[RMDB]
RNA sequence: GGGAACGACUCGAGUAGAGUCGAAAAGGCUACACAUGCGCGGCGUUCCUAGGUAGCAAGAAUACGUUUUGGUGUUUCGGAUUUAAUUUUCCAUUGUCCAUCUAAUUAGGUUCGUCGCGCAUGGAAAGGGAUAGAAUAACUUCGGUUAUUCUAUCCCAAAAGAAACAACAACAACAAC
Reactivity to 2A3 in 0.01 (KOAc 150mM, MgCl2 10mM, bicine 150mM(pH8.5), 24C), signal-to-noise 9, nucleotides 027 to 126: g080g030c040u070a020c060a000c000a040u000g010c000g000c000g000g000c000g000u000u000c000c000u000a020g000g050u020a010g010c140a170a060g120a170a080u110a120c160g040u090u110u150u180g120g000u050g040u030u060u100c090g010g010a020u030u080u260a130a190u120u130u140u050c030c030a040u060u100g050u030c010c010a030u030c030u040a050a070u040u010a000g000g000u000u000c000g000u000c010g000c000g000c000a000u000g000g000a020a000a000
Reactivity to DMS in 0.01 (KOAc 150mM, MgCl2 10mM, bicine 150mM(pH8.5), 24C), signal-to-noise 3, nucleotides 027 to 126: g000g020c060u000a030c100a190c010a000u000g010c000g020c000g010g000c000g000u000u010c000c000u010a000g010g000u000a030g000c300a110a110g010a090a030u000a030c060g010u000u020u020u020g020g010u000g000u000u000u010c050g000g020a070u000u010u040a070a040u040u020u050u010c120c120a050u000u000g010u000c030c010a170u040c020u000a030a030u010u000a010g010g000u000u020c030g020u000c000g010c000g010c000a000u010g000g000a050a040a130
An RNA of 177 nucleotides, treated with 2A3 and DMS and read out base by base.
Source: RMDB library OK1LIB, as collected in RNAgym.
Values cover nucleotides 27 to 126.
Conditions: 150 mM KOAc, 10 mM MgCl2 and 150 mM bicine (pH 8.5), 24 C.